[RMDB]
RNA sequence: GGGAACGACUCGAGUAGAGUCGAAAAAGUUAUGAGUUCGCUCAUAACUACAGCGAUAGGCGCUCGGACCCGCAGUCCGCCGAAGGCAUCCCAGCCUGUCCAAGUUGGUAUAUUUCGAUAUACCAAAAUAAUGAGCAUCGUUCGCGAUGCUCAUUAUAAAAGAAACAACAACAACAAC
Reactivity to DMS in 0.01 (KOAc 150mM, MgCl2 10mM, bicine 150mM(pH8.5), 24C), signal-to-noise 1, nucleotides 027 to 126: a030g010u000u030a010u000g010a010g020u000u010c290g000c010u000c010a020u000a010a000c000u000a070c170a130g000c070g000a040u000a130g010g010c040g040c070u000c050g010g000a140c000c030c100g020c130a170g000u000c030c020g020c140c050g020a110a060g000g000c020a100u000c000c000c000a120g010c010c030u000g020u010c050c060a140a100g040u010u000g000g000u000a010u000a010u010u000u000c180g020a000u000a000u010a000c000c010a000a030a100
Record summary:
Chemical mapping of a 177-nucleotide RNA with DMS. The reactions ran in a buffer of 150 mM KOAc, 10 mM MgCl2 and 150 mM bicine (pH 8.5), at 24 C.